An RNA of 177 nucleotides, treated with 2A3 and DMS and read out base by base. The 2A3 profile rests on 4,576 reads. 2A3 adducts were read by reverse transcription with SuperScript II with manganese. For DMS, 2,917 sequencing reads were counted. The reactions ran in a buffer of 150 mM KOAc, 10 mM MgCl2 and 150 mM bicine (pH 8.5), at 24 C. Source: RMDB library VIROID, as collected in RNAgym. For DMS the reverse transcriptase was MarathonRT. Values cover nucleotides 27 to 126.
RNA sequence: GGGAACGACUCGAGUAGAGUCGAAAAUCAGCUGCUUCGGUCGCCGCGGAUCACUGGCGUCCAGCGGAGAAACAGGAGCUCUUCGGUCGCCGCGGAUCACUGGCGUCCAGCGGAGAAACAGGAGCUCGUACUCCUUAUAGUUCGCUAUAAGGAGUACAAAAGAAACAACAACAACAAC
Reactivity to 2A3 in 0.01 (KOAc 150mM, MgCl2 10mM, bicine 150mM(pH8.5), 24C), signal-to-noise 4, nucleotides 027 to 126: u050c020a020g050c010u040g010c000u080u190c140g040g000u010c010g000c020c000g030c080g050g050a050u120c060a040c170u090g040g000c020g010u010c010c000a010g000c010g030g010a080g050a020a140a030c130a100g150g080a030g030c010u000c010u050u050c070g050g040u000c010g000c010c000g010c050g020g000a010u040c030a070c300u180g110g000c060g030u000c000c000a020g000c000g030g010a040g040a030a060a010c040a040g030g020a010g000c000u020c070
Reactivity to DMS in 0.01 (KOAc 150mM, MgCl2 10mM, bicine 150mM(pH8.5), 24C), signal-to-noise 3, nucleotides 027 to 126: u010c040a170g010c020u000g010c010u010u010c090g040g020u000c050g030c000c010g000c180g010g010a060u010c090a130c150u010g010g010c020g020u010c020c000a050g030c040g000g010a070g010a060a090a070c170a090g000g000a030g010c000u000c000u000u000c150g010g000u000c000g000c000c000g040c090g010g010a010u000c060a140c140u020g000g010c070g010u000c000c010a040g040c010g020g000a030g000a050a060a060c110a060g000g000a020g020c030u000c050